RNA sequence: GGGAACGACUCGAGUAGAGUCGAAAAUUGAAGGUAAAACAGCCUGUGGGUGAAACACACCCACAGGGCCCAUUGGGCGCUAGCACUCUGGUAUCACGGUACCUUUGUGCGCCUGUUUUACAGAAGGAGGGGAUUGACUUCGGUCAAUCCAAAAGAAACAACAACAACAAC
Reactivity to DMS in 0.01 (KOAc 150mM, MgCl2 10mM, bicine 150mM(pH8.5), 24C), signal-to-noise 5, nucleotides 027 to 129: u040u010g020a150a120g070g010u010a050a000a070a010c020a000g030c040c010u000g030u020g000g000g030u040g020a150a210a120c300a230c010a050c040c000c030a000c000a040g000g040g030c010c020c020a060u020u060g020g000g050c000g000c040u050a000g050c010a000c030u040c020u000g010g050u010a030u030c080a120c300g000g000u000a030c010c050u000u020u040g030u010g000c010g030c020c050u000g030u010u010u000u000a000c010a000g020a040a040g000g000a150g000g000
Reactivity to 2A3 in 0.01 (KOAc 150mM, MgCl2 10mM, bicine 150mM(pH8.5), 24C), signal-to-noise 2, nucleotides 027 to 129: u140u120g070a090a020g080g000u010a000a000a000a000c000a000g000c000c000u000g000u010g000g000g000u000g020a020a100a010c130a010c000a010c050c010c020a000c000a000g000g000g000c000c020c000a020u240u300g000g000g000c010g010c080u090a030g000c000a000c000u030c000u000g000g000u010a000u020c020a050c230g140g000u020a000c000c000u000u020u010g000u000g000c000g000c000c000u000g000u000u000u000u000a000c000a000g000a020a010g070g080a050g000g060